[RMDB]
RNA sequence: GGGAACGACUCGAGUAGAGUCGAAAACUGUGGUGGCCGGCGCACAUAACCGAGAGGCGACGUGGACGACUCCGCAACUUUCGGCAAUCCCACAAGGCGCAUCGCUGCGCUUGGUCAACCUGAGCGGCUUCACCGUAACGCUGGUGCAACGCUCGACCUUAAGGGCAAGGUUCGCCUUGCCCUUAAGAAAAGAAACAACAACAACAAC
Reactivity to DMS in 0.01 (KOAc 150mM, MgCl2 10mM, bicine 150mM(pH8.5), 24C), signal-to-noise 1, nucleotides 027 to 156: c070u010g010u020g020g010u000g010g060c070c000g030g000c050g000c030a090c080a190u000a170a100c050c030g050a070g050a090g020g050c030g050a120c100g060u000g010g000a140c110g000a070c140u000c030c010g010c030a040a050c060u000u000u000c050g030g000c050a080a200u020c070c000c010a110c090a130a120g000g050c010g000c050a080u000c130g000c170u000g000c010g000c000u010u000g140g010u000c030a050a000c030c020u000g000a030g000c030g030g000c190u000u020c030a160c090c010g000u000a100a050c140g000c100u010g030g030u020g040c010a120a040c040g000c000u090c020g010a080c150
Reactivity to 2A3 in 0.01 (KOAc 150mM, MgCl2 10mM, bicine 150mM(pH8.5), 24C), signal-to-noise 2, nucleotides 027 to 156: c010u010g070u110g050g000u020g020g000c010c050g020g010c000g030c030a050c000a140u270a140a110c030c020g060a050g000a030g080g030c010g040a080c120g020u050g000g030a080c120g030a050c090u030c110c000g030c040a100a130c090u080u300u110c010g010g000c020a040a040u020c030c060c000a020c070a020a050g140g000c060g000c030a040u120c040g040c220u010g000c010g000c010u160u250g000g000u020c040a050a030c040c000u020g010a000g000c010g020g080c120u060u060c000a000c000c000g080u120a220a020c110g020c270u200g010g010u000g000c010a010a030c020g000c000u000c000g050a060c010
The record gives the reactivity of an RNA of 207 nucleotides to DMS and 2A3. Source: RMDB library OK3TST, as collected in RNAgym. Reactivities are given for positions 27 through 156. Conditions: 150 mM KOAc, 10 mM MgCl2 and 150 mM bicine (pH 8.5), 24 C. For 2A3, 1,113 sequencing reads were counted.